[RMDB]
RNA sequence: GGGAACGACUCGAGUAGAGUCGAAAAGAUAUGGACCUGUCAAGCCAACAGCCGUAUGUCGGAAACGACAUGACGGACAUGGCUAGACAGGUCCUAAGUCAAAGUUUUGCCAGUUCGCUGGCAAAACGACUUAGGCUAAGUUCGCUUAGCCUAAGUCAAAAGAAACAACAACAACAAC
Reactivity to 2A3 in 0.01 (KOAc 150mM, MgCl2 10mM, bicine 150mM(pH8.5), 24C), signal-to-noise 6, nucleotides 027 to 126: g010a000u020a000u050g000g000a000c000c000u010g000u020c010a030a000g000c030c020a300a040c110a250g000c000c010g010u020a000u000g010u000c000g010g000a010a010a000c000g020a010c010a010u060g270a020c010g020g030a010c040a290u300g010g000c000u010a000g000a010c010a000g010g000u000c000c000u000a000a000g000u000c010a010a020a080g000u000u000u010u010g000c010c000a010g020u080u100c300g090c130u000g000g000c000a000a010a000a000c010
Reactivity to DMS in 0.01 (KOAc 150mM, MgCl2 10mM, bicine 150mM(pH8.5), 24C), signal-to-noise 8, nucleotides 027 to 126: g000a020u000a060u010g000g000a010c000c000u000g010u000c000a140a030g020c010c000a140a060c160a130g000c000c000g000u000a010u000g010u000c000g010g000a020a010a040c000g010a010c000a010u000g010a020c000g010g000a010c030a300u020g040g020c000u000a060g010a010c000a010g000g010u000c000c000u000a000a050g000u000c010a140a130a170g000u000u000u000u000g010c010c000a010g010u000u020c300g020c000u000g000g000c000a000a000a000a000c010
Chemical mapping of a 177-nucleotide RNA with 2A3 and DMS.
DMS adducts were read by reverse transcription with MarathonRT.
DMS (dimethyl sulfate) methylates the pairing face of unpaired adenines and cytosines.
The DMS profile rests on 21,369 reads.
For 2A3, 40,717 sequencing reads were counted.